[RMDB]
This 177-nucleotide RNA was probed chemically with DMS and 2A3.
RNA sequence: GGGAACGACUCGAGUAGAGUCGAAAAGUAAUGUAUUCUAUCUCUCUUUACAUUUUGGUCUCUAUACUACAUUAUUAAUGGGUUUUGUGUACUGUAAAGAAUUUAGCUGUAUCAAACUAGUGCAUGAAGGAAGAUUACGAUUCGUCGUAAUCUUCCUAAAAGAAACAACAACAACAAC
Reactivity to DMS in 0.01 (KOAc 150mM, MgCl2 10mM, bicine 150mM(pH8.5), 24C), signal-to-noise 2, nucleotides 027 to 126: g000u000a080a110u000g020u000a030u020u010c030u010a040u010c060u000c150u000c000u010u000u010a030c020a150u000u000u020u000g010g010u010c020u000c060u000a090u000a040c060u000a090c010a040u000u010a070u010u020a080a240u000g020g010g000u000u000u010u010g020u000g010u010a000c020u010g000u000a030a030a070g010a050a060u000u000u010a060g010c180u010g010u000a040u010c110a070a150a120c070u000a120g030u000g000c140a060u010g000a170
Reactivity to 2A3 in 0.01 (KOAc 150mM, MgCl2 10mM, bicine 150mM(pH8.5), 24C), signal-to-noise 1, nucleotides 027 to 126: g080u090a110a150u050g010u020a050u030u040c020u000a020u000c020u040c020u060c000u130u040u090a040c000a040u080u120u020u150g150g050u060c040u000c000u130a060u020a150c040u090a100c060a010u060u240a110u270u100a150a070u060g000g000g000u050u020u030u120g000u010g030u000a070c070u030g030u050a010a000a010g000a050a000u060u040u060a030g000c100u000g030u040a050u120c010a000a080a080c010u180a100g160u050g190c020a050u110g140a040
For 2A3 the reverse transcriptase was SuperScript II with manganese. Values cover nucleotides 27 to 126. For 2A3, 579 sequencing reads were counted. For DMS the reverse transcriptase was MarathonRT. Conditions: 150 mM KOAc, 10 mM MgCl2 and 150 mM bicine (pH 8.5), 24 C.